[RMDB]
RNA sequence: GGGAACGACUCGAGUAGAGUCGAAAAGAAAGGCAGCCAGUGCAGCCCACGCAGCGGCAUGCUUUUGCAUGCCCAGUCGAGCCCACGACUAAGGGCAGCUGCGCCACUGAGGGCAGCUGCCGAAAGACCAGUAUGCUGGAUUCGUCCAGCAUACUGGAAAAGAAACAACAACAACAAC
Reactivity to 2A3 in 0.01 (KOAc 150mM, MgCl2 10mM, bicine 150mM(pH8.5), 24C), signal-to-noise 2, nucleotides 027 to 126: g070a060a070a030g020g010c030a010g030c040c050a050g040u060g140c030a020g050c050c030c040a020c030g060c050a040g010c060g020g000c030a020u020g020c010u250u280u220u300g000c010a000u000g000c000c010c000a000g010u030c000g000a020g030c040c010c000a030c000g050a020c020u040a070a130g050g060g000c000a000g000c000u020g020c040g060c000c020a140c130u140g090a140g030g030g010c020a000g000c030u000g000c000c010g000a020a000a000g030a040
Reactivity to DMS in 0.01 (KOAc 150mM, MgCl2 10mM, bicine 150mM(pH8.5), 24C), signal-to-noise 2, nucleotides 027 to 126: g010a120a150a110g000g020c080a030g010c010c100a120g000u010g010c090a100g000c000c010c050a110c150g010c090a080g040c190g010g000c010a010u000g020c000u000u020u000u010g020c000a030u000g000c000c000c070a050g000u010c040g000a170g030c010c010c000a260c000g020a020c060u010a110a070g000g000g000c010a060g010c020u000g020c000g010c000c030a120c190u010g000a110g000g000g040c020a120g030c000u000g010c010c000g000a040a080a130g000a180
This 177-nucleotide RNA was probed chemically with 2A3 and DMS. Reactivities are given for positions 27 through 126. For DMS, 1,178 sequencing reads were counted. The data come from the RNA Mapping Database (RMDB), library OK2TRN.